An RNA of 177 nucleotides, treated with DMS and 2A3 and read out base by base. Conditions: 150 mM KOAc, 10 mM MgCl2 and 150 mM bicine (pH 8.5), 24 C. For DMS the reverse transcriptase was MarathonRT.

RNA sequence: GGGAACGACUCGAGUAGAGUCGAAAAGAGACAGCACAGUGGAGCAAUGUGACACCACUGUGGAGCACUGUGAAACCAGAGUGGAGCAGUCUAACAGCACAGUGGAGCACUGUCACAGCACAGUGGAGUGCCUCAGGAUGUUCGCAUCCUGAGGCACAAAAGAAACAACAACAACAAC
Reactivity to DMS in 0.01 (KOAc 150mM, MgCl2 10mM, bicine 150mM(pH8.5), 24C), signal-to-noise 2, nucleotides 027 to 126: g010a060g000a060c170a190g000c040a040c040a040g030u010g000g000a130g030c150a080a020u010g030u000g040a040c040a090c000c000a010c060u010g020u000g000g000a080g020c130a060c000u000g040u010g020a260a140a050c000c140a080g000a120g040u000g000g080a300g010c030a030g000u000c040u050a100a110c090a100g000c000a010c090a000g000u010g000g020a190g020c050a000c300u000g000u000c020a010c110a040g010c160a040c010a030g020u000g000g030a170
Reactivity to 2A3 in 0.01 (KOAc 150mM, MgCl2 10mM, bicine 150mM(pH8.5), 24C), signal-to-noise 1, nucleotides 027 to 126: g080a010g000a000c020a020g100c030a080c000a050g000u070g070g080a160g000c020a110a190u140g000u060g020a000c010a000c030c000a020c030u030g000u010g040g010a000g000c080a000c020u020g000u010g040a010a060a000c050c090a070g090a070g300u090g010g050a010g010c010a010g000u010c010u050a180a020c020a050g130c000a000c000a000g020u000g000g040a020g000c110a030c160u010g000u010c010a000c050a060g030c000a000c010a030g060u120g030g030a090